The record gives the reactivity of an RNA of 177 nucleotides to 2A3. It was measured as part of the RMDB library RFM100.
RNA sequence: GGGAACGACUCGAGUAGAGUCGAAAAGAAUGCGUGAAAAGCGUCGUCUCUCUGCCAUGUGCAUUUUCUCGUUAUGUUUUCAAACAGAAUUGAAUAGUAUAUCAAUGCGAACAAAAAAUGUUCGAUUUCCCUUACUCAGUUUCGACUGAGUAAGGGAAAAAGAAACAACAACAACAAC
Reactivity to 2A3 in 0.01 (KOAc 150mM, MgCl2 10mM, bicine 150mM(pH8.5), 24C), signal-to-noise 1, nucleotides 027 to 126: g120a020a060u070g000c000g040u030g160a000a000a010a030g100c080g020u000c000g000u000c000u000c000u000c000u040g090c090c000a160u130g000u020g000c060a090u000u000u000u100c060u000c000g080u040u000a100u090g110u000u000u080u000c090a120a120a000c050a120g060a220a280u000u000g000a020a000u110a170g050u120a070u100a060u080c070a140a000u180g000c050g000a040a000c000a020a000a130a000a060a000u200g000u000u000c000g000a000u000u000